[RMDB]
RNA sequence: GGGAACGACUCGAGUAGAGUCGAAAAGUAUCGGACGCGUCAGCUCCAGAGUAUCGGGGGUUGGAUAUCCCUCGUGAAUAUUGCAGGCAUCGACUGCAAAGACUAAACACUCCUCAAGACCGAUAGCAAAGUUGAGCAUUUUCGAAUGCUCAACUUUAAAAGAAACAACAACAACAAC
Reactivity to 2A3 in 0.01 (KOAc 150mM, MgCl2 10mM, bicine 150mM(pH8.5), 24C), signal-to-noise 4, nucleotides 027 to 126: g050u030a030u040c020g000g030a010c030g040c010g100u110c060a030g010c010u000c010c000a040g010a010g080u100a070u110c010g000g000g000g010g010u040u080g120g030a090u080a040u130c000c000c010u010c000g010u010g000a010a050u160a100u070u030g010c010a010g060g000c080a180u110c160g080a090c020u010g000c000a000a000a010g020a000c030u060a020a100a000c050a020c020u020c000c020u040c040a010a090g020a090c010c000g050a040u060a020g090c100
Reactivity to DMS in 0.01 (KOAc 150mM, MgCl2 10mM, bicine 150mM(pH8.5), 24C), signal-to-noise 4, nucleotides 027 to 126: g000u020a040u020c020g010g030a110c130g020c100g030u020c100a120g010c030u000c030c050a090g000a080g010u020a100u040c030g000g010g010g000g030u020u030g010g000a050u060a130u030c000c010c000u000c030g000u000g000a120a130u040a080u010u010g010c030a010g020g000c060a180u010c250g020a080c010u000g000c010a040a020a050g010a120c180u000a050a110a070c110a100c060u000c020c030u030c110a060a100g000a080c030c000g000a070u000a070g020c170